[RMDB]
The record gives the reactivity of an RNA of 207 nucleotides to 2A3 and DMS.
RNA sequence: GGGAACGACUCGAGUAGAGUCGAAAACGGAAGCAUUAAAACCAUUCGAGCUAGUCAAUGCGUGGCGUGUCUCUCCGCAGCGUGUUGGCGAGUGUAAAGAGUGACUAAGCAUGUAGUACCGAGGAUGAUAAGAGCAAUUCGUUCGCGAAUUGCUCAACUGUUUCACAAGGUUCGCCUUGUGAAACAGAAAAGAAACAACAACAACAAC
Reactivity to 2A3 in 0.01 (KOAc 150mM, MgCl2 10mM, bicine 150mM(pH8.5), 24C), signal-to-noise 5, nucleotides 027 to 156: c050g030g030a080a020g010c010a030u040u130a090a040a030a060c040c010a020u040u040c030g010a040g040c010u030a030g020u020c000a000a020u010g010c010g030u030g050g000c050g020u120g100u080c060u020c030u020c120c010g000c000a020g000c000g000u040g010u020u000g010g000c000g000a010g000u050g020u050a090a130a030g030a010g020u030g020a030c030u060a060a020g050c010a040u050g040u070a060g040u040a080c030c040g010a050g060g030a050u140g030a030u100a240a110g010a000g010c000a000a000u000u020c010g020u030u080c180g000c000g120a000a000u000u000g000c000u000c000a000a000
Reactivity to DMS in 0.01 (KOAc 150mM, MgCl2 10mM, bicine 150mM(pH8.5), 24C), signal-to-noise 2, nucleotides 027 to 156: c050g020g000a220a150g040c020a090u000u000a080a090a180a100c100c000a100u010u000c040g000a300g000c010u000a090g010u000c000a010a020u000g010c000g050u010g000g070c010g000u000g020u010c120u000c030u000c100c000g030c000a030g010c010g000u000g010u000u010g030g000c010g000a030g040u010g010u000a080a070a110g010a070g040u010g000a090c050u000a110a100g030c080a130u000g030u000a070g020u000a130c010c020g030a140g000g010a140u000g000a120u010a120a090g000a010g030c000a000a000u010u010c000g000u000u010c300g040c030g050a010a020u000u000g000c000u000c000a010a050
DMS (dimethyl sulfate) methylates the pairing face of unpaired adenines and cytosines. For 2A3, 4,777 sequencing reads were counted. For 2A3 the reverse transcriptase was SuperScript II with manganese. It was measured as part of the RMDB library M2RFPK.